[RMDB]
RNA sequence: GGGAACGACUCGAGUAGAGUCGAAAACGCAUGCGAGAGCAUGCGGCUAAGCUUCGGCUUAGUAAGAGUAACUUAGGAUUUUAGGCUCCCCGGCGUGUCUCGAACAAUGCCGGGCCAAACCCAUAGGGCUGGCGGUCCCUGUGCGGUAAGAAUUCAAGUGGUCGAUUAAUUUCGAUUAAUCGACCACAAAAGAAACAACAACAACAAC
Reactivity to 2A3 in 0.01 (KOAc 150mM, MgCl2 10mM, bicine 150mM(pH8.5), 24C), signal-to-noise 2, nucleotides 027 to 156: c000g000c000a020u000g000c020g000a040g000a000g020c010a010u020g000c000g020g000c000u040a030a010g020c010u030u150c300g080g020c000u000u000a010g000u010a000a050g050a010g080u000a130a070c030u060u070a080g040g010a050u040u090u010u040a050g080g000c010u070c050c000c000c000g000g000c010g020u020g000u040c100u140c230g110a040a100c080a090a190u060g000c000c000g010g000g030c000c000a060a020a000c020c020c000a020u010a010g000g000g030c070u070g110g030c020g010g020u180c010c000c020u000g010u020g000c070g030g000u010a000a040g020a020a050u060u070c110a200a000
This 207-nucleotide RNA was probed chemically with 2A3. The RNA was probed in 150 mM KOAc, 10 mM MgCl2 and 150 mM bicine (pH 8.5) at 24 C.